[RMDB]
RNA sequence: GGGAACGACUCGAGUAGAGUCGAAAAUAGCUGACGUUCGCGUCAGCUAAAAGCACCAAAACCUCCUGGCGGUGCGGCGCCGGCCCCCCCGGGAAGGCCGCCAACUCGAUGGGUUCGCCCAUCGAAACGAAAACAAGUAUUUCGAUACUUGUUUUCGAAAAGAAACAACAACAACAAC
Reactivity to DMS in 0.01 (KOAc 150mM, MgCl2 10mM, bicine 150mM(pH8.5), 24C), signal-to-noise 5, nucleotides 027 to 126: u000a010g000c000u000g010a010c000g020u000u010c220g020c010g010u000c000a010g000c000u010a000a020a070a140g000c120a150c020c020a090a070a080a250c100c030u000c030c030u000g010g010c090g010g020u000g020c070g010g030c050g010c060c050g010g000c030c010c020c010c050c010c050g010g000g010a050a050g000g010c030c030g000c030c110a070a130c160u010c000g010a010u000g010g000g010u000u010c200g000c010c010c010a000u000c010g000a010a060a110
Reactivity to 2A3 in 0.01 (KOAc 150mM, MgCl2 10mM, bicine 150mM(pH8.5), 24C), signal-to-noise 3, nucleotides 027 to 126: u050a000g000c010u000g010a010c000g040u030u030c280g020c000g080u020c000a000g010c000u010a000a000a000a000g000c010a040c050c000a030a070a100a160c020c040u050c010c030u030g050g000c040g030g010u080g160c050g010g030c060g050c050c000g130g000c000c000c010c000c000c010c010g000g020g000a010a010g030g000c030c030g070c030c010a030a040c030u010c010g000a000u000g000g000g040u030u020c190g050c020c010c000a000u000c000g000a010a000a000